RNA sequence: GGGAACGACUCGAGUAGAGUCGAAAAGAUUCCUCGUUGUUGAGCGAGGUUUAAACAAAUCGACCACACAAACGUAGAGCCGACUACGGACUUAUAAAUUAAGGCAUUAAGUGUGAUAAGGAGACAAAAAACGAUGUUGUGUUCGCACAACAUCGAACUGGAUACGAGUCUUCGGACUCGUAUCCAGAAAAGAAACAACAACAACAAC
Reactivity to 2A3 in 0.01 (KOAc 150mM, MgCl2 10mM, bicine 150mM(pH8.5), 24C), signal-to-noise 1, nucleotides 027 to 156: g030a060u120u120c000c000u010c000g000u010u000g010u020u010g000a000g000c010g010a000g000g050u120u080u030a010a000a000c030a000a000a000u000c000g030a010c000c000a010c000a000c010a020a140a060c010g000u010a000g000a000g000c000c010g010a000c000u000a000c000g000g000a030c010u150u050a080u090a300a020a080u220u130a010a000g000g000c020a020u100u160a140a100g000u000g010u000g000a030u040a090a040g130g010a030g020a030c100a000a130a000a040a010a030c000g000a000u000g000u000u000g010u000g000u000u030c130g030c140a010c000a000a000c000a000u000c000g000a000a000